An RNA of 177 nucleotides, treated with 2A3 and DMS and read out base by base.

RNA sequence: GGGAACGACUCGAGUAGAGUCGAAAACAGCCUGCCGUUGCUCCACAGCUGGGGGUGCGCAGGGUAGGCGGGAGGCUUCGAAGCCCCGUCUCCGGGCGGGGUGGAGCCGUCGAUGAGACACCGCCCAGCAGUUCAGAUCAUUCGUGAUCUGAACUGCAAAAGAAACAACAACAACAAC
Reactivity to 2A3 in 0.01 (KOAc 150mM, MgCl2 10mM, bicine 150mM(pH8.5), 24C), signal-to-noise 4, nucleotides 027 to 126: c010a020g060c000c000u020g070c070c030g130u140u170g030c010u020c020c010a210c040a170g090c220u300g020g010g010g020g000u040g010c030g000c010a020g010g000g020u060a030g020g000c070g000g030g010a050g000g040c020u110u070c120g090a120a030g020c010c000c000c000g010u000c020u000c050c060g140g000g000c000g000g000g000g010u180g010g010a010g000c000c010g030u020c010g040a130u190g040a000g000a010c020a010c020c000g000c000c030c000a020
Reactivity to DMS in 0.01 (KOAc 150mM, MgCl2 10mM, bicine 150mM(pH8.5), 24C), signal-to-noise 1, nucleotides 027 to 126: c040a170g020c000c000u000g030c030c040g010u040u020g000c010u010c020c020a070c030a150g070c170u000g000g000g000g000g020u020g020c200g000c040a030g000g000g000u000a010g010g010c000g000g020g010a170g010g000c000u000u010c000g000a140a250g020c000c000c000c000g040u000c010u000c170c140g000g000g010c000g020g000g010g020u040g000g000a010g000c030c010g000u020c050g000a200u000g000a140g020a160c090a230c030c000g030c000c000c100a100
The reactions ran in a buffer of 150 mM KOAc, 10 mM MgCl2 and 150 mM bicine (pH 8.5), at 24 C. It was measured as part of the RMDB library RFM100.